[RMDB]
RNA sequence: GGGAACGACUCGAGUAGAGUCGAAAAGAUAUGGAUAACUAAGACAUGUUAGCGCUACUGCUGAAGGUAAUCGGAAACGAUUACCUUCAGCAGUAGCGACCUAACAACAGCUUACUUAUCCUAAGUCGUAGGAAUAUAACUUCGGUUAUAUUCCUACAAAAGAAACAACAACAACAAC
Reactivity to DMS in 0.01 (KOAc 150mM, MgCl2 10mM, bicine 150mM(pH8.5), 24C), signal-to-noise 2, nucleotides 027 to 126: g020a090u000a300u000g010g000a000u000a000a000c100u000a010a010g000a050c110a250u000g010u010u000a010g000c020g010c010u000a000c010u000g030c000u000g000a050a040g040g030u020a010a010u000c000g000g000a150a100a230c020g020a010u000u000a000c000c010u000u000c000a000g000c000a010g000u000a000g010c000g010a000c300c010u000a010a000c000a020a140c300a130g010c010u000u010a000c130u000u000a010u000c000c010u020a080a160g010u000c170
Structure probing data (DMS) for a 177-nucleotide construct. Reactivities are rounded to 0.1 and cut off at 0 and 3. Source: RMDB library TTRINS, as collected in RNAgym. DMS adducts were read by reverse transcription with MarathonRT.